This 177-nucleotide RNA was probed chemically with 2A3.
[RMDB]
RNA sequence: GGGAACGACUCGAGUAGAGUCGAAAACGCUCGUGGAUGCAGAAGCUGUCACCGCUUGAGGUGUUAGGCAACGCAAUACCGGCUGUUGCAUCGCUGGGGAAAAGAGAGACGCGCACCCACGUGAUUGGCCACCUGCUUGUUUCGACAAGCAGGUGGCAAAAGAAACAACAACAACAAC
Reactivity to 2A3 in 0.01 (KOAc 150mM, MgCl2 10mM, bicine 150mM(pH8.5), 24C), signal-to-noise 1, nucleotides 027 to 126: c120g010c060u020c010g090u020g010g000a020u030g000c000a000g020a300a080g030c000u010g000u070c000a000c070c020g070c190u100u150g090a090g010g100u000g020u020u300a060g020g030c010a060a010c010g000c150a100a100u010a120c000c060g060g000c020u070g040u120u140g000c030a060u030c000g050c100u120g000g000g000g030a000a200a020a000g070a000g000a000g000a040c000g070c020g000c090a020c000c000c010a000c040g050u080g040a170u000u130g080
The RNA was probed in 150 mM KOAc, 10 mM MgCl2 and 150 mM bicine (pH 8.5) at 24 C. For 2A3 the reverse transcriptase was SuperScript II with manganese.